[RMDB]
RNA sequence: GGGAACGACUCGAGUAGAGUCGAAAAACUUACGUCCACACACGUUUACAGCACACUUGAAGAAGAUAUUUCCACCAUCUUCCAAACUGUCGUCCUAGAACAUGUCAACCACACCAAGCUUUUCACUUACAACACCAAGCUUCACUACGCAACCACAGCUAGCGGUUGUAUUCGUACAACCGCUAGCAAAAGAAACAACAACAACAAC
Reactivity to 2A3 in 0.01 (KOAc 150mM, MgCl2 10mM, bicine 150mM(pH8.5), 24C), signal-to-noise 2, nucleotides 027 to 156: a000c090u110u080a090c100g000u000c060c000a030c010a000c000a010c180g000u040u130u150a100c110a020g020c010a020c000a020c050u120u120g090a100a070g000a020a000g060a110u080a120u060u140u050c030c010a040c010c010a040u000c000u060u000c020c000a030a000a120c010u030g020u080c000g010u030c030c010u060a050g040a110a000c010a030u060g060u010c020a040a040c040c000a010c000a000c030c010a140a030g050c100u010u010u120u130c040a030c020u070u140a000c000a080a000c000a060c010c010a030a040g000c000u020u000c030a020c040u130a050c050g020c040a000a000c040c070a010c000a020

Record summary:
This 207-nucleotide RNA was probed chemically with 2A3. The data come from the RNA Mapping Database (RMDB), library OK3TST. Values are in units of 0.01, from 0 to 300, in steps of 10. Conditions: 150 mM KOAc, 10 mM MgCl2 and 150 mM bicine (pH 8.5), 24 C.